[RMDB]
Chemical mapping of a 177-nucleotide RNA with 2A3 and DMS. For DMS, 1,583 sequencing reads were counted. Reactivities are given for positions 27 through 126. It was measured as part of the RMDB library VIROID.
RNA sequence: GGGAACGACUCGAGUAGAGUCGAAAACGGUUCUGGUUAUGUCCGUGUCUCCCUAUCAGUUACUUCCGGUAACUACGAGUUUGUAGUGGCGUAAGUCUCGUCCUCAUAGGACUCCUCAGGUAGCCUACGUUCCGUAUGACUUCGGUCAUACGGAACGAAAAGAAACAACAACAACAAC
Reactivity to 2A3 in 0.01 (KOAc 150mM, MgCl2 10mM, bicine 150mM(pH8.5), 24C), signal-to-noise 1, nucleotides 027 to 126: c000g050g000u000u040c020u070g140g000u140u160a050u170g010u010c010c020g040u010g030u040c040u040c080c000c000u000a110u120c040a020g020u020u040a020c010u050u000c000c070g030g040u030a100a000c000u010a010c040g080a130g190u070u240u240g080u130a060g010u000g040g060c000g050u030a060a080g060u000c020u030c030g140u040c020c000u020c010a130u110a150g000g010a070c010u000c000c030u030c020a010g010g070u040a010g020c000c000u040a050
Reactivity to DMS in 0.01 (KOAc 150mM, MgCl2 10mM, bicine 150mM(pH8.5), 24C), signal-to-noise 2, nucleotides 027 to 126: c030g010g000u010u010c020u000g000g020u010u010a050u010g000u000c020c010g010u000g000u000c210u010c020c000c030u020a040u000c080a090g010u000u000a040c030u010u030c070c070g030g000u000a060a060c000u010a040c070g000a200g000u010u010u010g040u000a050g030u000g000g000c040g000u010a080a050g010u000c070u000c080g020u010c020c010u000c130a080u000a130g010g010a130c060u000c010c030u010c110a060g010g000u000a090g000c010c020u000a080